The record gives the reactivity of an RNA of 177 nucleotides to 2A3. Conditions: 150 mM KOAc, 10 mM MgCl2 and 150 mM bicine (pH 8.5), 24 C. The 2A3 profile rests on 748 reads.
RNA sequence: GGGAACGACUCGAGUAGAGUCGAAAAAUGCCGCAUUCAGCGACGGUUACUCUAGUGGGCCACUGUCGAUCUAGCGUUGACAUCUACAUACUAUAUAGUAAUACCAAUACUCAAGACUACGAAACGGGACGGACCGGAUAUUCGUAUCCGGUCCGUCAAAAGAAACAACAACAACAAC
Reactivity to 2A3 in 0.01 (KOAc 150mM, MgCl2 10mM, bicine 150mM(pH8.5), 24C), signal-to-noise 2, nucleotides 027 to 126: a000u090g000c000c020g010c010a060u130u150c000a030g000c030g100a040c000g090g040u010u060a000c030u010c010u060a040g020u040g060g110g010c000c000a040c030u120g080u070c000g000a000u000c000u020a010g000c010g030u060u300g000a000c000a010u000c000u020a100c050a010u090a080c000u060a010u130a030u040a300g000u000a000a000u030a180c000c060a050a000u030a010c000u000c010a080a000g190a230c000u040a110c210g150a120a120a020c080g180g010